[RMDB]
RNA sequence: GGGAACGACUCGAGUAGAGUCGAAAACAUAAUGACUUCGGUCAUUAUGAAAUAAAGGCAGUCGAGAGCGCGCGGCACAGUCACGCGCUGACGCCACGACAAAAAUCGGGACCUUCGGGUCCCGAAAGCUAGCUAUUUAGUUCGCUAAAUAGCUAGCAAAAGAAACAACAACAACAAC
Reactivity to DMS in 0.01 (KOAc 150mM, MgCl2 10mM, bicine 150mM(pH8.5), 24C), signal-to-noise 2, nucleotides 027 to 126: c000a010u000a000a000u000g010a000c000u020u010c220g020g020u000c010a010u020u000a000u000g010a090a070a080u010a070a080a130g000g000c020a060g030u000c010g010a120g010a040g010c010g010c020g010c030g000g000c050a120c240a110g020u010c010a010c010g000c000g010c000u000g000a060c040g000c010c000a050c080g000a020c100a050a070a040a130a100u000c000g000g000g010a020c000c000u000u000c230g020g060g000u000c000c000c000g000a000a020a060
Reactivity to 2A3 in 0.01 (KOAc 150mM, MgCl2 10mM, bicine 150mM(pH8.5), 24C), signal-to-noise 1, nucleotides 027 to 126: c000a000u000a010a010u000g010a000c000u020u020c180g050g000u000c010a010u020u000a010u000g010a010a020a020u190a020a050a020g070g000c120a020g040u010c010g030a050g020a020g300c010g000c000g000c030g030g010c050a070c030a300g040u040c010a000c010g010c000g020c000u020g010a000c000g010c000c020a030c030g100a030c080a000a130a000a000a040u050c000g020g000g010a000c000c030u010u100c190g090g010g020u030c000c000c000g000a000a000a030
An RNA of 177 nucleotides, treated with DMS and 2A3 and read out base by base. For 2A3, 1,813 sequencing reads were counted.